[RMDB]
This 177-nucleotide RNA was probed chemically with DMS. Conditions: 150 mM KOAc, 10 mM MgCl2 and 150 mM bicine (pH 8.5), 24 C. Reactivities are given for positions 27 through 126. For DMS, 1,056 sequencing reads were counted.
RNA sequence: GGGAACGACUCGAGUAGAGUCGAAAAGUUGUGAGCCAGAACGGAUGUACUGCCCGUGGCUCGGUUGCAGCAUACCCAUUAAAAGCUGUGCGAGGGUGCUUUUGCCGCAGCCUGACUCGCCGACGAAACGGAGGCUCAUGUUCGCAUGAGCCUCCGUAAAAGAAACAACAACAACAAC
Reactivity to DMS in 0.01 (KOAc 150mM, MgCl2 10mM, bicine 150mM(pH8.5), 24C), signal-to-noise 1, nucleotides 027 to 126: g000u000u000g020u010g020a030g020c020c020a040g000a280a100c020g000g020a120u000g010u020a070c140u020g020c070c000c000g040u000g000g010c040u020c030g000g050u000u000g010c030a010g000c020a110u000a150c020c040c020a160u010u010a040a130a140a120g000c030u000g000u000g000c010g010a030g020g000g030u020g010c040u000u000u010u010g040c050c030g010c070a070g030c050c030u020g000a100c030u020c070g000c030c030g000a020c070g000a030a140
DMS adducts were read by reverse transcription with MarathonRT.